[RMDB]
RNA sequence: GGGAACGACUCGAGUAGAGUCGAAAAAAAAAAUAGAUCGAUCUAUUAACGAUCUCGCGCGGGUCGUCGGUGGUCGGCGAGCCCACGGACGAACUUACUCGCGCGUAAGUUAAUAAAUCGCCAAAAACUGAUAAAUAUCGUUCGCGAUAUUUAUCAGAAAAGAAACAACAACAACAAC
Reactivity to DMS in 0.01 (KOAc 150mM, MgCl2 10mM, bicine 150mM(pH8.5), 24C), signal-to-noise 2, nucleotides 027 to 126: a000a030a030a040a020a130u010a030g020a050u000c000g020a020u000c030u000a020u000u000a010a000c000g000a220u000c230u000c010g040c000g010c000g020g000g000u000c030g000u000c000g010g060u000g000g000u010c020g020g010c190g000a260g010c130c000c000a000c000g010g010a030c010g020a130a030c140u020u000a110c000u010c010g040c020g000c010g000u000a000a100g010u000u000a000a010u000a010a010a010u000c010g020c150c070a050a050a070a080a090
Reactivity to 2A3 in 0.01 (KOAc 150mM, MgCl2 10mM, bicine 150mM(pH8.5), 24C), signal-to-noise 1, nucleotides 027 to 126: a040a090a020a000a020a000u150a040g040a060u090c000g000a000u010c010u010a010u040u010a030a010c000g020a040u060c050u020c100g000c000g000c000g000g000g000u030c000g000u000c050g200g010u000g000g000u030c010g010g110c110g000a010g030c000c000c000a000c000g060g010a000c000g000a050a030c020u140u130a010c000u090c000g010c030g010c010g000u000a000a000g000u000u000a000a000u010a020a010a000u000c010g000c020c000a060a150a020a010a030